[RMDB]
RNA sequence: GGGAACGACUCGAGUAGAGUCGAAAAGAUCCUUCUCGAGAUCAUCCACUAACUUUCUUGCAUUGACCCACUGCUCGAGGACUCCUUCUCUUCCCGCUCGGGAUUUCUUCGUCUCGGACCGGCUCAUUACGGAUAACGUUCGCGUUAUCCAAAAGAAACAACAACAACAAC
Reactivity to 2A3 in 0.01 (KOAc 150mM, MgCl2 10mM, bicine 150mM(pH8.5), 24C), signal-to-noise 9, nucleotides 027 to 129: g020a020u080c010c000u040u050c030u020c030g080a080g030a260u020c000a040u020c020c020a080c100u110a140a080c040u070u150u120c020u040u120g040c040a120u020u130g060a080c000c010c010a060c040u040g010c000u020c010g020a040g010g040a090c020u020c000c000u070u050c030u010c000u040u050c010c000c000g020c030u040c030g030g020g010a040u050u060u020c020u040u050c030g100u010c010u000c000g010g020a030c010c010g010g000c020u030c030a080u070u150a060c100
Reactivity to DMS in 0.01 (KOAc 150mM, MgCl2 10mM, bicine 150mM(pH8.5), 24C), signal-to-noise 9, nucleotides 027 to 129: g000a050u000c000c000u030u030c020u010c040g030a010g030a160u000c030a120u040c030c020a130c140u070a080a070c150u010u020u010c070u000u040g030c110a080u000u030g020a110c010c030c040a080c020u000g010c000u030c000g000a050g020g020a120c060u020c030c070u010u020c050u000c050u010u000c010c000c010g050c090u000c010g000g000g000a090u030u030u030c050u020u020c080g040u030c000u000c050g010g020a040c080c050g000g000c040u040c050a080u020u020a100c170